[RMDB]
RNA sequence: GGGAACGACUCGAGUAGAGUCGAAAAGGAAUGUGCUUCGGCACAUUCCAAAAGAAAGGCAGACGGCGAACGCCAAACGCUGACGAACCAAAAUGGAAGGUAAAACCCACCGGUUCGCCGGUGGGAAACUACCGUACAGCUUCGGCUGUACGGUAGUAAAAGAAACAACAACAACAAC
Reactivity to DMS in 0.01 (KOAc 150mM, MgCl2 10mM, bicine 150mM(pH8.5), 24C), signal-to-noise 1, nucleotides 027 to 126: g000g030a000a000u000g010u000g010c010u000u000c250g040g030c010a000c000a000u080u000c010c000a030a000a060a180g010a070a070a110g020g070c010a010g000a300c220g000g000c000g030a110a130c150g010c000c000a070a110a110c170g000c010u000g000a150c020g000a110a080c010c030a050a020a060a060u000g000g000a060a140g000g000u000a060a080a120a170c000c000c040a000c000c000g000g000u000u010c230g020c000c010g000g090u000g030g000g000a000a000
An RNA of 177 nucleotides, treated with DMS and read out base by base.
DMS adducts were read by reverse transcription with MarathonRT.
For DMS, 585 sequencing reads were counted.
The RNA was probed in 150 mM KOAc, 10 mM MgCl2 and 150 mM bicine (pH 8.5) at 24 C.
Values are in units of 0.01, from 0 to 300, in steps of 10.